[RMDB]
RNA sequence: GGGAACGACUCGAGUAGAGUCGAAAAGCGUACUACACGAUAAGUGGAGCUUGGAUUUAUUGGUCUCUAGCGUGUCCCAAAUAGGAUCGGGCCAAUUGUCAGCUCCAUGAAGCGUGUAUCGCAAACGAGGAAUCCUAGUUCGCUAGGAUUCCUCGAAACGAAAUGCUGGUUUCGACCAGCAUUUCGUAAAAGAAACAACAACAACAAC
Reactivity to 2A3 in 0.01 (KOAc 150mM, MgCl2 10mM, bicine 150mM(pH8.5), 24C), signal-to-noise 2, nucleotides 027 to 156: g030c020g000u060a100c000u000a000c120a000c000g000a000u020a030a060g000u020g020g000a020g000c010u160u170g200g000a110u240u300u070a000u070u070g000g050u000c080u020c120u190a110g110c100g110u260g040u060c000c000c020a070a220a220u230a090g000g040a010u020c060g000g000g020c000c020a000a000u000u000g020u000c000a000g000c000u000c040c000a000u030g030a030a060g000c000g000u000g000u000a000u080c000g000c000a000a010a060c010g000a000g000g000a000a000u020c010c000u000a030g030u080u030c240g080c120u000a000g000g000a000u000u000c000c000u000c000g010a000a000
The record gives the reactivity of an RNA of 207 nucleotides to 2A3.
The RNA was probed in 150 mM KOAc, 10 mM MgCl2 and 150 mM bicine (pH 8.5) at 24 C.
It was measured as part of the RMDB library RNAMAK.